[RMDB]
RNA sequence: GGGAACGACUCGAGUAGAGUCGAAAAGAGCUUUUUCUGCAGGCUGUAUUCCUUGUGGCACAUCAAAAAUUCUAGGAAGUACAGACACUAUCUUGCUAGGCAGUAAUUGUAUAGCAGGAAGUGAAAGUAAUGGAAAUGUGCCUUACCUGCAGCAAAAGAGUAUCAAAAUCUUCGGAUUUUGAUACUCAAAAGAAACAACAACAACAAC
Reactivity to DMS in 0.01 (KOAc 150mM, MgCl2 10mM, bicine 150mM(pH8.5), 24C), signal-to-noise 3, nucleotides 027 to 156: g000a160g000c030u000u010u000u000u010c000u000g010c020a030g000g000c030u000g020u000a100u000u000c030c030u010u010g010u000g010g020c000a030c010a060u000c050a070a060a150a040a100u010u000c060u000a110g040g010a150a170g000u010a040c020a080g010a300c000a040c000u010a110u000c000u010u000g000c000u010a020g040g050c050a050g010u010a080a130u010u010g060u000a050u000a020g030c010a030g000g000a080a050g000u000g000a030a110a300g020u010a070a070u010g000g010a030a020a300u010g020u000g000c000c010u000u000a010c000c010u000g000c010a050g020c110a030a080a050a190
Reactivity to 2A3 in 0.01 (KOAc 150mM, MgCl2 10mM, bicine 150mM(pH8.5), 24C), signal-to-noise 6, nucleotides 027 to 156: g090a040g070c030u070u080u020u100u050c000u000g000c000a000g010g000c010u100g070u130a120u070u090c030c000u020u110g070u060g030g010c000a010c010a020u050c080a050a070a130a120a170u180u080c060u130a060g080g100a140a070g060u030a010c000a030g120a010c000a000c000u170a300u210c010u010u000g000c000u010a010g040g000c000a020g030u270a280a120u140u020g000u020a040u000a020g000c000a000g000g000a010a000g000u010g030a080a050a000g020u040a030a060u060g010g030a040a080a010u000g000u000g000c000c000u000u000a000c010c000u010g010c000a000g000c000a000a010a000a060
Chemical mapping of a 207-nucleotide RNA with DMS and 2A3. Reactivities are given for positions 27 through 156. As a SHAPE reagent, 2A3 marks flexible, mostly unpaired nucleotides at the ribose 2'-OH. Conditions: 150 mM KOAc, 10 mM MgCl2 and 150 mM bicine (pH 8.5), 24 C. The 2A3 profile rests on 4,674 reads. The DMS profile rests on 4,448 reads.